RNA sequence: GGGAACGACUCGAGUAGAGUCGAAAAUGAAAGACAAACCAAGGACAAAGGAAAAUACCAUUACACAUGAAUAAGGGAAAAAGGAAAACCAAGGAAACCAACCAAUACGAAAGGAAUUAAAGAAAAAGAUAAGGAAAGUCUUCGGACUUUCCUUAUCAAAAGAAACAACAACAACAAC
Reactivity to DMS in 0.01 (KOAc 150mM, MgCl2 10mM, bicine 150mM(pH8.5), 24C), signal-to-noise 1, nucleotides 027 to 126: u010g000a090a120a060g000a030c050a100a050a060c140c010a100a110g030g000a060c160a070a090a060g010g000a110a150a030a090u000a040c090c000a030u030u000a060c050a060c060a060u000g000a050a050u000a130a080g000g000g000a000a010a090a030a120g000g010a060a040a020a110c090c000a050a050g000g000a030a060a040c010c010a140a040c040c030a020a110u030a050c130g000a060a050a050g000g000a020a050u050u000a000a040a100g060a010a010a080a140a180